[RMDB]
RNA sequence: GGGAACGACUCGAGUAGAGUCGAAAAUUAAAGUACGUAGAAGCGGCGUGAAGCAUGUAGAAAGCUUUGCGAGCAUAUCGAGCUACAUGUGAGCGAAAGCGCUUACGUACAACGAUAUGCAAAAAAACAUAAGUAUAGACUUCGGUCUAUACUUAUGAAAAGAAACAACAACAACAAC
Reactivity to DMS in 0.01 (KOAc 150mM, MgCl2 10mM, bicine 150mM(pH8.5), 24C), signal-to-noise 8, nucleotides 027 to 126: u000u010a070a100a140g000u000a000c010g010u000a040g010a110a080g020c060g010g000c030g010u000g010a130a260g000c000a010u000g000u000a040g010a080a100a110g010c070u000u000u010g010c130g010a110g010c030a030u000a010u010c020g010a100g010c020u000a000c020a020u000g010u000g000a190g010c030g020a060a080a140g010c020g010c010u000u000a000c000g010u010a000c010a060a080c060g000a020u000a010u000g010c030a000a000a050a070a060a060a110
Reactivity to 2A3 in 0.01 (KOAc 150mM, MgCl2 10mM, bicine 150mM(pH8.5), 24C), signal-to-noise 8, nucleotides 027 to 126: u050u020a060a010a010g010u010a010c010g000u000a020g040a300a020g030c010g130g010c010g020u030g040a040a010g010c010a010u020g010u030a020g050a180a150a010g030c040u090u110u150g110c120g040a030g010c020a020u040a030u170c050g010a020g030c000u010a000c000a000u030g090u110g010a020g030c030g060a230a130a030g050c010g000c010u010u000a000c000g000u010a000c000a000a000c010g020a020u050a040u210g040c040a100a050a030a020a000a050a050
Structure probing data (DMS and 2A3) for a 177-nucleotide construct.
It was measured as part of the RMDB library M2PK90.
The reactions ran in a buffer of 150 mM KOAc, 10 mM MgCl2 and 150 mM bicine (pH 8.5), at 24 C.